[RMDB]
Conditions: 150 mM KOAc, 10 mM MgCl2 and 150 mM bicine (pH 8.5), 24 C. Chemical mapping of a 177-nucleotide RNA with DMS and 2A3. Values are in units of 0.01, from 0 to 300, in steps of 10. The data come from the RNA Mapping Database (RMDB), libraries RFM100 and RFMREP. Reactivities are given for positions 27 through 126.
RNA sequence: GGGAACGACUCGAGUAGAGUCGAAAAUUUUCUUUGAGUCGCGUUGUUUGGGAAUGCAGCGCAAAGUAGGUGGUAAAUUCCAUCUAAAGCUAAAUAUUGGUGCGAGACCGAUAGCGAACAAGUACCGGUCUCAAUUUUGAUUCGUCAAAAUUGAGACAAAAGAAACAACAACAACAAC
Reactivity to DMS in 0.01 (KOAc 150mM, MgCl2 10mM, bicine 150mM(pH8.5), 24C), signal-to-noise 3, nucleotides 027 to 126: u010u010u000u010c010u020u010u030g000a090g010u010c090g030c060g020u000u000g000u010u000u000g040g000g030a150a110u000g010c060a090g020c040g000c040a060a040a060g020u000a000g000g000u000g000g000u010a070a130a150u050u040c000c010a010u000c010u020a030a070a110g020c070u020a060a070a150u000a070u010u000g010g010u000g010c150g020a170g020a050c000c060g010a090u000a040g010c020g030a090a070c190a050a100g000u000a150c030c030g000
Reactivity to 2A3 in 0.01 (KOAc 150mM, MgCl2 10mM, bicine 150mM(pH8.5), 24C), signal-to-noise 4, nucleotides 027 to 126: u030u020u010u020c050u070u090u120g100a050g040u140c040g000c010g010u000u040g010u010u050u180g060g000g020a090a040u090g000c000a000g000c010g020c010a010a030a020g050u030a010g000g000u010g000g000u020a080a160a170u190u020c000c000a000u010c010u020a060a040a040g030c030u060a050a130a140u220a150u070u140g030g000u030g040c050g060a030g100a030c000c010g020a020u020a010g060c080g050a050a050c040a070a010g050u060a040c010c060g060